This 207-nucleotide RNA was probed chemically with 2A3 and DMS.
[RMDB]
RNA sequence: GGGAACGACUCGAGUAGAGUCGAAAAGCGAUCACCGAUGACUCCGGCCUGAUGGAGUUUCUCGGCGGUCGUGGGGCUGAUGAGAGAAAUGUCGUACAUGUCUUUGGAUUUGAUGCGCAGCUGUUUGAGCAUGGCUUCAGCGGCGGUCACGUCCGCCCAAAUUCCUUAGCUUCGGCUAAGGAAUUUGAAAAGAAACAACAACAACAAC
Reactivity to 2A3 in 0.01 (KOAc 150mM, MgCl2 10mM, bicine 150mM(pH8.5), 24C), signal-to-noise 6, nucleotides 027 to 156: g000c010g010a010u010c010a000c030c000g020a020u030g010a000c000u000c000c000g150g090c090c170u300g060a190u300g020g010a040g000u020u060u020c130u000c010g000g000c020g000g010u000c000g010u030g000g010g020g000c040u050g030a080u070g030a070g010a010g050a090a090a130u130g040u080c040g000u060a050c030a080u080g030u040c020u080u150u180g050g020a060u020u040u100g060a080u130g140c000g000c030a020g000c010u030g070u170u120u140g010a020g020c060a100u110g090g020c000u040u040c020a030g020c000g020g000c000g000g010u030c020a010c070g020u000c010c000g020c010c000
Reactivity to DMS in 0.01 (KOAc 150mM, MgCl2 10mM, bicine 150mM(pH8.5), 24C), signal-to-noise 2, nucleotides 027 to 156: g020c000g000a030u000c010a120c000c010g020a060u000g010a060c010u000c010c000g000g040c250c150u000g010a140u010g020g010a060g010u000u000u000c280u000c010g010g030c010g030g040u000c000g020u010g010g010g050g040c030u000g010a090u000g000a120g010a110g010a040a070a070u000g010u000c040g040u010a190c100a070u000g020u000c030u000u010u000g030g010a090u000u000u010g010a050u000g010c030g040c030a090g000c020u000g000u000u000u000g000a090g010c060a100u000g030g000c030u000u000c050a100g010c000g000g010c010g030g000u000c060a070c060g000u000c010c010g000c080c040
For 2A3 the reverse transcriptase was SuperScript II with manganese. The DMS profile rests on 7,128 reads. The reactions ran in a buffer of 150 mM KOAc, 10 mM MgCl2 and 150 mM bicine (pH 8.5), at 24 C.